Conditions: 150 mM KOAc, 10 mM MgCl2 and 150 mM bicine (pH 8.5), 24 C. An RNA of 177 nucleotides, treated with DMS and 2A3 and read out base by base. For 2A3, 2,008 sequencing reads were counted. Source: RMDB library TTRDES, as collected in RNAgym.
[RMDB]
RNA sequence: GGGAACGACUCGAGUAGAGUCGAAAAGAUAUGGAGUCGUUCAGCCACGAUAAGCGUCGGUCGGAAACGACCGAACGCUUUUGACGUGGGACGACUCCUAAGUCAAAAGAAGUAGUUCGCUACUUCAGAUCUAGGGUACGUUCGCGUACCCUAGAUCAAAAGAAACAACAACAACAAC
Reactivity to DMS in 0.01 (KOAc 150mM, MgCl2 10mM, bicine 150mM(pH8.5), 24C), signal-to-noise 2, nucleotides 027 to 126: g000a010u000a140u020g000g010a020g010u000c000g000u000u010c300a240g020c180c000a010c000g010a130u040a020a030g000c000g000u010c000g000g000u000c010g020g010a040a050a070c000g000a000c000c000g020a020a050c030g000c000u000u000u000u000g000a100c080g030u000g000g010g000a010c040g000a000c000u000c000c000u000a010a070g000u010c020a100a090a080a100g000a010a000g020u000a020g020u000u020c300g000c000u000a020c000u000u000c010a090
Reactivity to 2A3 in 0.01 (KOAc 150mM, MgCl2 10mM, bicine 150mM(pH8.5), 24C), signal-to-noise 1, nucleotides 027 to 126: g000a000u020a010u110g000g000a000g000u000c000g000u000u130c090a050g220c030c010a030c040g180a220u100a300a000g010c000g000u000c010g000g000u000c000g040g050a000a040a030c000g020a000c080c010g000a030a000c000g030c010u000u020u010u030g080a010c050g000u000g000g000g000a000c000g010a000c000u000c000c000u000a040a020g020u000c000a050a060a000a140g020a030a000g000u000a020g040u000u120c240g000c240u020a000c010u000u000c000a030